[RMDB]
RNA sequence: GGGAACGACUCGAGUAGAGUCGAAAAGAGUACUAUCACCAUCGUGCAUUAUCGAAUGUGUCAAGCAUGGUAAUGCACUAGGAUGGAUUGUACUUGACACAAGAUUUAUCCGAUGGUGAUGGUAUAGGCUUCACGAAGAUUUCGAUCUUUGUGGAGCAAAAGAAACAACAACAACAAC
Reactivity to DMS in 0.01 (KOAc 150mM, MgCl2 10mM, bicine 150mM(pH8.5), 24C), signal-to-noise 9, nucleotides 027 to 126: g000a190g020u000a010c000u000a000u000c000a010c010c000a040u010c050g010u010g010c070a010u000u000a010u000c010g010a120a080u010g010u010g000u020c120a050a070g000c050a040u010g010g010u010a020a010u000g010c010a020c030u020a060g010g010a070u000g000g000a030u000u010g010u020a080c080u010u010g000a060c090a060c060a060a130g000a070u000u010u010a020u000c010c000g000a050u000g000g010u000g000a010u000g000g010u000a000u000a040g010
Reactivity to 2A3 in 0.01 (KOAc 150mM, MgCl2 10mM, bicine 150mM(pH8.5), 24C), signal-to-noise 9, nucleotides 027 to 126: g110a020g010u000a000c000u000a000u000c000a000c010c000a000u010c030g030u050g050c040a020u010u030a000u020c050g160a300a120u070g030u020g120u180c120a080a020g010c030a050u070g030g040u100a030a010u040g000c000a010c010u020a020g030g020a050u030g010g030a010u010u030g050u090a110c020u030u100g080a010c020a000c000a070a030g010a040u040u090u100a030u030c010c010g000a000u010g000g010u000g000a000u000g000g000u010a010u030a010g040